RNA sequence: GGGAACGACUCGAGUAGAGUCGAAAAGAUAUGGAACAUGUCCUGACAUGCGAGUGUUCGGAAACGAACACAUCGCAACAGCAGGCAUGUUCCUAAGUCAAAACGAUGACAGUUCGCUGUCAUCGAAUCGUCUUAGAGAGUUCGCUCUCUAAGACGAAAAAGAAACAACAACAACAAC
Reactivity to DMS in 0.01 (KOAc 150mM, MgCl2 10mM, bicine 150mM(pH8.5), 24C), signal-to-noise 4, nucleotides 027 to 126: g000a010u000a060u000g000g000a000a000c000a000u000g000u020c000c000u000g010a090c100a080u020g000c020g010a040g010u000g020u000u000c010g010g000a020a000a030c000g010a010a010c000a010c020a060u000c000g020c000a040a040c300a180g000c010a010g000g000c000a000u000g000u000u000c000c000u000a000a060g010u000c010a110a090a110a200c010g010a020u000g000a020c000a020g000u000u010c290g010c010u000g010u000c000a000u000c000g000a050a080
Reactivity to 2A3 in 0.01 (KOAc 150mM, MgCl2 10mM, bicine 150mM(pH8.5), 24C), signal-to-noise 4, nucleotides 027 to 126: g010a000u020a010u050g000g000a000a010c000a000u020g260u290c020c040u030g030a080c090a300u150g000c010g010a000g000u000g000u000u000c000g000g010a010a010a000c010g000a000a010c020a000c010a210u010c000g030c020a050a050c130a100g000c000a010g020g000c000a000u000g000u000u000c000c000u000a000a000g000u000c010a000a010a110a120c020g000a000u000g000a000c010a000g030u070u130c300g080c160u010g010u000c000a000u000c000g000a020a080
Source: RMDB library TTRDES, as collected in RNAgym.
The record gives the reactivity of an RNA of 177 nucleotides to DMS and 2A3.
The RNA was probed in 150 mM KOAc, 10 mM MgCl2 and 150 mM bicine (pH 8.5) at 24 C.